Source: RMDB library M2PK50, as collected in RNAgym. This 177-nucleotide RNA was probed chemically with DMS. Values cover nucleotides 27 to 126. For DMS, 876 sequencing reads were counted. Conditions: 150 mM KOAc, 10 mM MgCl2 and 150 mM bicine (pH 8.5), 24 C. Reactivities are rounded to 0.1 and cut off at 0 and 3.

[RMDB]
RNA sequence: GGGAACGACUCGAGUAGAGUCGAAAACUAGCCAGGUUCGCCUGGCUAGAAAUAAAAUCACCGGUUAAAAAGCUCCCGUUAUAACCGCUGAACGGGAGCUUAAAAGGCGGUGGUUCGCCACCGCCAACCACAAACUAUUGUUCGCAAUAGUUUGUGGAAAAGAAACAACAACAACAAC
Reactivity to DMS in 0.01 (KOAc 150mM, MgCl2 10mM, bicine 150mM(pH8.5), 24C), signal-to-noise 1, nucleotides 027 to 126: c000u000a000g000c000c000a010g000g000u000u000c220g020c000c000u010g000g000c000u010a010g000a020a040a100u010a100a120a120a160u010c140a050c060c010g000g020u020u000a050a070a220a030a040g010c010u000c000c000c020g020u000u000a050u020a160a120c130c170g000c190u000g000a010a000c010g000g020g000a010g010c000u000u000a000a060a120a120g000g000c000g040g010u010g000g020u000u000c150g010c020c000a020c020c000g060c000c000a010a060